This 207-nucleotide RNA was probed chemically with 2A3. It was measured as part of the RMDB library M2RFPK. For 2A3, 596 sequencing reads were counted. The RNA was probed in 150 mM KOAc, 10 mM MgCl2 and 150 mM bicine (pH 8.5) at 24 C.
RNA sequence: GGGAACGACUCGAGUAGAGUCGAAAACAGGCAAGUACACAAUUCUCUAAGCGAUGAGAAGCGUGUGGAAAAUUAGGGAAGGGCUACGGCUAUAAUCCUAAGAAAGCUUAUCUACAAGCGGAGGUAUAAAAGCUCGCAGCGUUCGCGCUGCGAGCAACGUUAUAAAGUGGUUCGCCACUUUAUAACGAAAAGAAACAACAACAACAAC
Reactivity to 2A3 in 0.01 (KOAc 150mM, MgCl2 10mM, bicine 150mM(pH8.5), 24C), signal-to-noise 1, nucleotides 027 to 156: c030a030g020g080c030a110a000g090u090a030c010a000c010a050a070u030u010c000u000c010u090a240a150g090c140g120a090u060g010a060g000a020a020g030c020g010u030g010u050g020g010a000a110a030a030u150u060a050g000g000g000a030a040g030g010g000c000u040a030c090g030g000c000u030a030u030a200a020u040c000c010u010a050a020g080a060a040a000g040c010u060u050a020u110c090u090a090c020a060a070g030c070g090g020a040g060g000u060a090u070a190a120a130a040g050c000u000c010g070c000a020g000c010g020u040u060c180g000c000g000c100u000g080c100g000a010g020c060a000a000